[RMDB]
RNA sequence: GGGAACGACUCGAGUAGAGUCGAAAAGAUAUGGAGUUUCGUGUCUUCAACAGCAGAGGACUCGGAAACGAGUCUCUGACAUGAAGCCGAAACUCCUAAGUCAAAGUGAGCAGUUCGCUGCUCACAACAUUAACCCGAACUUCGGUUCGGGUUAAUGAAAAGAAACAACAACAACAAC
Reactivity to 2A3 in 0.01 (KOAc 150mM, MgCl2 10mM, bicine 150mM(pH8.5), 24C), signal-to-noise 1, nucleotides 027 to 126: g000a000u070a020u220g000g000a010g000u020u000u000c130g010u090g100u070c030u030u020c060a300a180c030a140g060c010a000g030a040g090g270a200c020u000c030g030g000a030a050a030c000g010a010g000u040c000u000c010u010g090a060c050a280u300g010a000a000g000c030c010g000a000a000a000c000u000c000c000u030a020a000g000u000c030a110a030a000g000u000g010a000g000c010a000g000u070u200c300g040c130u030g000c010u000c000a010c000a000a000
Reactivity to DMS in 0.01 (KOAc 150mM, MgCl2 10mM, bicine 150mM(pH8.5), 24C), signal-to-noise 2, nucleotides 027 to 126: g020a050u000a300u010g060g000a040g020u000u000u000c000g030u010g000u020c020u010u000c010a020a140c260a220g000c000a000g010a040g000g030a020c000u000c000g010g000a080a060a050c020g000a030g020u000c000u000c020u000g000a020c120a290u000g010a030a010g010c000c010g000a000a010a010c000u010c000c000u000a030a110g000u010c040a070a130a130g030u000g000a000g000c000a020g000u000u010c300g050c000u000g000c000u010c000a000c020a120a200
Chemical mapping of a 177-nucleotide RNA with 2A3 and DMS. The reactions ran in a buffer of 150 mM KOAc, 10 mM MgCl2 and 150 mM bicine (pH 8.5), at 24 C. The DMS profile rests on 1,810 reads. The data come from the RNA Mapping Database (RMDB), library TTRDES. For DMS the reverse transcriptase was MarathonRT. Values are in units of 0.01, from 0 to 300, in steps of 10.